[RMDB]
RNA sequence: GGGAACGACUCGAGUAGAGUCGAAAACAUGUCGUCACCCUUCUUAAGGAGCUGCAGCUGGGCUACAUUCUGUUCCUGAAGGUAAAAGCUACCAGUGGGAUUCUGAGACAGAUCAUACUCAUACUCCCAGGCAGUUAGCUCACUGAAUGCAUAAGGGACCUAAACCUACUUUCGAGUAGGUUUAGGUAAAAGAAACAACAACAACAAC
Reactivity to DMS in 0.01 (KOAc 150mM, MgCl2 10mM, bicine 150mM(pH8.5), 24C), signal-to-noise 2, nucleotides 027 to 156: c050a180u000g040u010c040g000u010c030a150c020c000c000u000u000c060u000u000a080a080g030g020a110g000c040u010g020c030a060g020c100u010g020g010g010c030u000a020c090a070u020u000c030u000g010u000u000c100c050u020g000a180a060g010g010u000a050a070a120a130g070c040u010a030c040c000a150g020u020g040g040g020a060u000u000c090u000g010a100g010a300c050a170g020a060u000c040a270u000a080c040u000c030a090u000a050c130u000c000c000c010a160g000g000c020a050g060u000u010a070g030c020u000c030a130c040u010g000a080a040u000g030c020a070u000a070a060g010g060g000
Reactivity to 2A3 in 0.01 (KOAc 150mM, MgCl2 10mM, bicine 150mM(pH8.5), 24C), signal-to-noise 4, nucleotides 027 to 156: c060a090u140g020u070c050g090u060c080a200c000c010c010u030u030c040u090u120a090a050g040g020a030g000c020u060g000c040a010g010c040u030g000g020g060c010u080a060c040a130u090u060c020u020g060u110u110c030c010u050g070a140a090g010g010u070a130a140a050a030g040c050u040a020c000c000a070g040u120g010g010g020a020u150u020c050u190g040a020g030a080c020a050g120a040u080c060a060u060a140c000u000c050a020u040a110c000u040c020c010c000a020g080g000c010a020g030u060u120a000g020c010u000c030a110c030u030g050a130a070u120g010c010a030u030a140a040g000g000g020